Annotation:
An RNA of 177 nucleotides, treated with 2A3 and DMS and read out base by base. Conditions: 150 mM KOAc, 10 mM MgCl2 and 150 mM bicine (pH 8.5), 24 C. The DMS profile rests on 1,876 reads. Values cover nucleotides 27 to 126.

RNA sequence: GGGAACGACUCGAGUAGAGUCGAAAAUUUUAGCAACAGUCCCAGUUAUUGGUACUUGACUUUGUUAUUGAAUAUGAGGAAGUGAAUAUAUUAAUGACUUUACACUGUUAAAAUUACAUGUAUUACAUGUGCUGAUUGAAUUCGUUCAAUCAGCACAAAAAGAAACAACAACAACAAC
Reactivity to 2A3 in 0.01 (KOAc 150mM, MgCl2 10mM, bicine 150mM(pH8.5), 24C), signal-to-noise 3, nucleotides 027 to 126: u060u050u000u020a040g010c000a000a060c000a090g080u000c000c010c080a000g030u010u090a050u000u010g020g000u000a040c020u050u030g080a030c030u050u030u030g280u160u030a040u060u220g250a130a190u230a070u130g000a010g140g080a050a020g010u040g020a080a000u110a000u000a010u070u040a040a040u040g000a000c000u060u050u070a040c080a020c060u000g010u100u050a000a050a000a150u070u070a020c010a020u190g030u130a110u070u160a020c050a140
Reactivity to DMS in 0.01 (KOAc 150mM, MgCl2 10mM, bicine 150mM(pH8.5), 24C), signal-to-noise 2, nucleotides 027 to 126: u030u040u000u010a020g000c120a020a050c140a090g000u000c000c150c060a060g030u000u000a020u000u000g020g030u010a000c300u000u000g010a010c000u000u000u000g030u000u000a020u000u090g000a040a110u040a120u000g000a000g010g010a000a020g020u030g000a020a010u010a300u000a000u010u000a030a000u000g000a010c010u040u030u040a120c220a160c070u020g000u000u000a010a010a040a010u010u030a090c150a050u020g000u000a070u040u030a110c190a070